[RMDB]
RNA sequence: GGGAACGACUCGAGUAGAGUCGAAAAGUAACCUGAAUCCAAUUAUGAGAAAACAAUCAGACACAUCCAGAAUGCAGGACAUUUUACAGAAUAACUGGCCUGGACUUUCAAAAAGGCUAAUACCAUGAACAAAAGGACUGAUGAGUAUUUGGGUGGAGACCUACCGAUUAUUCGUAAUCGGUAGGUCAAAAGAAACAACAACAACAAC
Reactivity to 2A3 in 0.01 (KOAc 150mM, MgCl2 10mM, bicine 150mM(pH8.5), 24C), signal-to-noise 2, nucleotides 027 to 156: g030u030a040a150c000c020u000g120a010a060u030c050c010a010a090u050u040a140u230g060a040g070a060a070a000a030c050a040a080u030c030a020g040a080c020a020c010a160u020c040c010a020g040a200a080u030g020c000a030g000g000a020c000a070u100u170u040u090a060c020a040g040a140a030u110a190a100c040u030g050g110c000c000u000g080g040a050c030u130u160u070c090a110a040a020a020a000g000g000c010u020a020a000u030a020c000c040a000u050g090a050a020c050a100a040a040a010g010g000a000c000u060g050a040u030g010a030g050u100a050u110u030u050g050g030g000u040g010g000a010
Reactivity to DMS in 0.01 (KOAc 150mM, MgCl2 10mM, bicine 150mM(pH8.5), 24C), signal-to-noise 1, nucleotides 027 to 156: g040u010a060a210c050c010u000g040a060a100u020c020c060a000a070u010u050a140u000g010a130g000a030a030a070a110c060a140a140u000c020a070g000a070c070a050c020a060u000c000c010a200g010a120a070u020g010c020a040g010g020a180c100a060u000u000u000u000a300c090a160g000a120a280u020a070a050c110u000g020g060c000c010u000g010g000a060c100u000u020u000c070a030a090a120a170a090g000g010c010u010a060a040u050a060c060c000a120u010g000a070a190c050a030a050a040a130g040g020a120c020u020g020a080u000g000a060g050u020a110u000u000u000g000g000g020u000g000g040a220